Source: RMDB library OK2TST, as collected in RNAgym.
An RNA of 177 nucleotides, treated with 2A3 and DMS and read out base by base.
Values cover nucleotides 27 to 126.
For DMS, 1,455 sequencing reads were counted.

[RMDB]
RNA sequence: GGGAACGACUCGAGUAGAGUCGAAAAAUGGCACGGACGUCGAAAGAUCGUCUCUCAAAGGUGCGAAAAAUCCUUGGUAGAUUUACCACGCCACUUCUGCCAGAUGAUUACUCGGUGCUGAUUAACCCAUCACGGUUCGAUUCGUCGAACCGUGAUGAAAAGAAACAACAACAACAAC
Reactivity to 2A3 in 0.01 (KOAc 150mM, MgCl2 10mM, bicine 150mM(pH8.5), 24C), signal-to-noise 1, nucleotides 027 to 126: a000u030g010g000c010a010c060g070g060a010c010g040u060c050g100a040a020a050g020a020u060c050g010u000c010u010c000u010c050a120a030a050g080g020u000g000c050g060a040a050a000a000a000u000c020c010u030u020g090g030u090a100g050a280u070u080u110a070c050c040a050c030g050c000c020a030c020u070u000c040u010g010c020c000a070g010a080u090g000a020u050u000a010c000u000c000g040g010u000g030c000u000g030a090u110u100a120a090c000c000
Reactivity to DMS in 0.01 (KOAc 150mM, MgCl2 10mM, bicine 150mM(pH8.5), 24C), signal-to-noise 2, nucleotides 027 to 126: a040u030g010g000c060a050c060g010g000a040c110g010u010c200g020a080a120a150g010a020u010c020g030u000c000u000c080u000c040a030a060a040g020g010u000g010c020g010a010a080a070a040a030u000c010c110u000u000g000g050u000a090g010a050u000u000u000a040c120c130a100c130g000c070c080a020c030u000u000c040u000g040c040c070a040g010a050u000g000a050u000u000a070c150u000c030g000g010u000g000c010u000g000a110u000u000a100a140c010c000

For 2A3, 1,498 sequencing reads were counted.
Conditions: 150 mM KOAc, 10 mM MgCl2 and 150 mM bicine (pH 8.5), 24 C.
2A3 adducts were read by reverse transcription with SuperScript II with manganese.